Source: RMDB library OK1LIB, as collected in RNAgym. Structure probing data (DMS and 2A3) for a 177-nucleotide construct. For DMS, 1,011 sequencing reads were counted. DMS adducts were read by reverse transcription with MarathonRT.
RNA sequence: GGGAACGACUCGAGUAGAGUCGAAAACUGAGUAUGAGGAAGCUGCUGCAAGGGAGGCAGCUGAGGCGUCUGAGGCCUCAAAUGGACAUGCCACAUCUGAGGUGGCAAAUAAGAAUGCGUACCUUAGUAUUAGGACGUGCUUCGGCACGUCCUAAUAAAAAGAAACAACAACAACAAC
Reactivity to DMS in 0.01 (KOAc 150mM, MgCl2 10mM, bicine 150mM(pH8.5), 24C), signal-to-noise 1, nucleotides 027 to 126: c000u010g010a110g010u030a040u000g020a040g020g000a140a150g020c000u000g030c080u040g050c090a220a130g010g030g040a270g000g070c000a010g000c000u090g140a160g000g000c060g000u000c040u060g000a070g000g000c080c000u000c020a030a050a040u040g000g040a080c170a040u000g090c000c050a200c220a030u040c100u040g060a130g000g000u050g000g000c000a000a000a000u000a180a020g050a130a050u070g000c040g000u050a020c030c020u000u000a000g010
Reactivity to 2A3 in 0.01 (KOAc 150mM, MgCl2 10mM, bicine 150mM(pH8.5), 24C), signal-to-noise 1, nucleotides 027 to 126: c000u000g030a060g040u120a100u100g080a100g040g020a100a000g000c050u150g000c000u000g010c100a100a080g000g030g000a000g000g020c000a000g000c000u000g000a000g000g000c040g020u100c300u290g180a070g300g000c000c000u000c070a050a050a030u040g100g000a010c000a000u020g000c000c010a130c050a150u270c100u220g020a020g130g080u000g000g010c000a030a030a030u070a000a000g160a020a020u150g080c130g110u100a110c000c000u100u000a120g140
The RNA was probed in 150 mM KOAc, 10 mM MgCl2 and 150 mM bicine (pH 8.5) at 24 C.